[RMDB]
RNA sequence: GGGAACGACUCGAGUAGAGUCGAAAAACAACAGAUAGCUGGAACCAGCGUAGAAUUCUACGCAUAUCCAUAGCGAAUGGUACCUGUAAAGAAAAUAAUGAUGGAUGUACAAGUACCAACAGCCGUCAAUGCCAUGGUGAUGUCAAUCACAUAUGCACGGCAUUUAGGUGUUCGCACCUAAAUGCCGAAAAGAAACAACAACAACAAC
Reactivity to 2A3 in 0.01 (KOAc 150mM, MgCl2 10mM, bicine 150mM(pH8.5), 24C), signal-to-noise 2, nucleotides 027 to 156: a000c000a010a040c010a020g040a040u120a030g040c020u000g060g000a100a050c060c000a020g000c000g020u000a000g090a070a270u300u020c060u030a000c000g000c040a010u040a030u010c000c030a050u150a060g120c040g020a080a080u050g000g000u000a000c000c000u000g000u100a080a090a060g140a020a150a000a000u150a050a010u080g130a030u120g050g030a050u080g010u000a050c010a060a000g000u000a000c020c000a050a020c040a000g010c040c000g100u030c030a010a040u030g060c030c020a040u090g000g010u020g000a030u000g080u100c060a080a040u010c000a010c000a020u200a030u070g020c000a010
Conditions: 150 mM KOAc, 10 mM MgCl2 and 150 mM bicine (pH 8.5), 24 C. Structure probing data (2A3) for a 207-nucleotide construct. Reactivities are given for positions 27 through 156. For 2A3 the reverse transcriptase was SuperScript II with manganese. The 2A3 profile rests on 714 reads. Source: RMDB library OK3TST, as collected in RNAgym.